[RMDB]
RNA sequence: GGGAACGACUCGAGUAGAGUCGAAAAUGACCCGUUGCUUCUGGUAGCUUCGGCUCCAGCAAUCACUAGGGGAUGCCUGUAAACCCGAACUGAUUGUCAUACAGAACAGGAUCGUCGCGUAGCACGUUGUGGGCGAAGUGACUAAAACUUACACAACCAAGAAUAAAGUGUUCGCACUUUAUUCUUGAAAAGAAACAACAACAACAAC
Reactivity to 2A3 in 0.01 (KOAc 150mM, MgCl2 10mM, bicine 150mM(pH8.5), 24C), signal-to-noise 2, nucleotides 027 to 156: u160g130a070c000c000c020g110u160u200g050c070u070u110c020u060g060g040u260a010g000c000u030u030c190g070g000c010u000c000c000a000g000c000a000a000u000c000a010c020u040a040g000g000g010g000a020u060g010c000c000u010g010u020a040a090a060c000c000c000g010a010a010c010u010g000a010u020u010g040u090c020a030u130a210c100a050g110a100a000c000a000g020g000a010u010c000g000u000c000g000c010g070u080a010g000c010a000c020g000u000u000g000u000g000g000g000c000g030a090a000g000u010g000a000c000u000a000a000a010a000c020u100u130a050c010a000c000a000a000c000
Reactivity to DMS in 0.01 (KOAc 150mM, MgCl2 10mM, bicine 150mM(pH8.5), 24C), signal-to-noise 3, nucleotides 027 to 156: u010g010a170c020c000c040g020u010u010g010c010u000u010c050u070g020g000u000a030g020c000u000u010c100g030g000c000u040c000c010a030g000c020a030a030u000c020a000c030u000a300g010g000g000g000a100u010g030c150c060u020g040u000a100a110a300c010c010c000g020a140a230c150u000g010a040u000u010g010u000c040a050u010a100c020a070g010a100a140c110a070g030g010a080u000c060g000u000c040g000c010g010u010a200g010c050a070c060g010u000u000g040u020g020g000g010c020g000a090a220g020u000g010a150c020u000a040a040a080a090c070u000u000a100c040a050c030a030a090c040

Source information
Chemical mapping of a 207-nucleotide RNA with 2A3 and DMS. For DMS the reverse transcriptase was MarathonRT. The RNA was probed in 150 mM KOAc, 10 mM MgCl2 and 150 mM bicine (pH 8.5) at 24 C. For DMS, 4,659 sequencing reads were counted.